[RMDB]
RNA sequence: GGGAACGACUCGAGUAGAGUCGAAAAGCAGUUCUACAAAAAGCAUAUAACAAUUAGUUAUAGUUCAAACAUUGAUAAUCCGAUGGUAUUUGGUUUAGUGAAAUCCCAAAUUGUACUACCAACUGUCGUACGCAAAAAUCUUCGGAUUUUUGCGUACAAAAGAAACAACAACAACAAC
Reactivity to DMS in 0.01 (KOAc 150mM, MgCl2 10mM, bicine 150mM(pH8.5), 24C), signal-to-noise 2, nucleotides 027 to 126: g020c160a110g000u000u000c060u040a020c070a030a060a060a190a100g000c060a090u000a000u000a000a000c040a180a190u070u010a080g000u000u000a060u000a060g000u010u090c050a050a030a130c070a100u010u040g010a090u030a030a040u050c110c000g030a020u000g000g000u020a010u040u000u020g000g000u010u060u070a090g020u000g030a150a160a080u040c030c000c000a010a100a190u000u000g000u010a060c010u000a010c100c070a070a040c280u000g030u020c080
Reactivity to 2A3 in 0.01 (KOAc 150mM, MgCl2 10mM, bicine 150mM(pH8.5), 24C), signal-to-noise 3, nucleotides 027 to 126: g040c000a020g030u020u010c050u070a150c170a020a090a000a000a100g060c030a090u020a000u000a050a040c050a050a150u300u100a100g000u000u000a030u000a020g100u010u060c060a060a170a040c080a050u110u110g010a030u100a300a030u080c040c000g000a010u020g010g050u070a100u050u090u040g120g000u120u070u120a070g040u050g090a090a000a010u060c020c000c010a020a050a000u070u140g030u030a030c000u050a010c000c010a040a010c020u020g040u050c030
Chemical mapping of a 177-nucleotide RNA with DMS and 2A3. The RNA was probed in 150 mM KOAc, 10 mM MgCl2 and 150 mM bicine (pH 8.5) at 24 C. For DMS, 1,486 sequencing reads were counted.